[RMDB]
RNA sequence: GGGAACGACUCGAGUAGAGUCGAAAAUCGCUUUAUCUACUGGAACCGGUCCAUUCUUCCAAGGUACACCAGGUGCUACCCCAUCAUUUAACUCAUCUGAAAUUAAUUGAUACACUUGGCCAUCGACCGUACAGCCAAAGUUCGCUUUGGCUGUACGAAAAGAAACAACAACAACAAC
Reactivity to 2A3 in 0.01 (KOAc 150mM, MgCl2 10mM, bicine 150mM(pH8.5), 24C), signal-to-noise 1, nucleotides 027 to 126: u080c030g000c040u130u150u060a150u120c030u080a090c050u020g040g000a050a110c020c030g050g040u090c040c000a070u020u000c010u040u000c010c050a060a010g020g010u050a040c010a030c050c010a030g050g020u000g010c020u090a090c000c030c000c020a040u070c020a030u080u100u000a040a010c050u030c050a150u060c190u170g070a090a010a110u080u060a070a060u160u040g010a010u020a050c030a010c040u040u010g030g000c000c050a040u060c030g010a020c040
Reactivity to DMS in 0.01 (KOAc 150mM, MgCl2 10mM, bicine 150mM(pH8.5), 24C), signal-to-noise 1, nucleotides 027 to 126: u000c080g020c080u000u000u000a050u010c120u010a100c060u020g020g020a060a070c070c070g010g010u000c030c020a080u000u010c020u000u000c080c030a140a090g010g000u010a050c240a100c020c050a030g000g050u000g010c050u000a220c080c000c020c060a000u000c040a000u000u000u000a040a020c070u000c050a110u000c090u000g020a060a030a160u000u000a000a080u030u010g000a050u010a040c030a040c040u000u000g000g000c030c040a070u000c100g030a130c270
The data come from the RNA Mapping Database (RMDB), library OK2TST. The record gives the reactivity of an RNA of 177 nucleotides to 2A3 and DMS. 2A3 is a SHAPE reagent: it acylates the 2'-hydroxyl of flexible nucleotides of all four kinds. For 2A3 the reverse transcriptase was SuperScript II with manganese. DMS adducts were read by reverse transcription with MarathonRT.